[RMDB]
RNA sequence: GGGAACGACUCGAGUAGAGUCGAAAACGAUUGGCGGUAGAGGAAAGUCCAGGCUCGCCCAAGCUGAGAUGCUUGGAGUGUUCGUACCUGGCGCAAGCCAGGGCAAGUGAGGCGCAAGCCUCGCUGAUCUCCUAGAUCGUUUCGACGAUCUAGGAGAAAAAGAAACAACAACAACAAC
Reactivity to DMS in 0.01 (KOAc 150mM, MgCl2 10mM, bicine 150mM(pH8.5), 24C), signal-to-noise 3, nucleotides 027 to 126: c070g000a130u030u040g020g010c050g040g000u020a040g000a090g010g000a140a060a080g030u000c040c040a090g000g000c040u020c030g000c120c000c010a000a030g000c010u010g000a300g000a050u000g010c000u040u000g000g000a200g000u000g020u010u010c130g010u000a090c000c010u000g000g000c050g000c270a090a080g000c020c020a010g000g020g030c100a080a030g010u000g000a010g000g000c000g000c190a110a190g010c000c000u000c000g000c000u000g000a150
Reactivity to 2A3 in 0.01 (KOAc 150mM, MgCl2 10mM, bicine 150mM(pH8.5), 24C), signal-to-noise 1, nucleotides 027 to 126: c030g070a070u000u110g030g000c070g020g030u030a000g050a000g050g080a030a070a030g050u050c050c030a020g000g030c010u000c000g010c030c010c000a000a000g000c000u020g000a020g000a060u120g030c000u030u000g010g000a090g010u040g010u020u060c060g040u000a130c010c020u010g010g000c030g010c010a030a030g000c000c000a000g010g020g000c020a000a020g010u040g000a000g010g000c000g050c060a050a010g000c010c000u000c010g000c000u000g000a030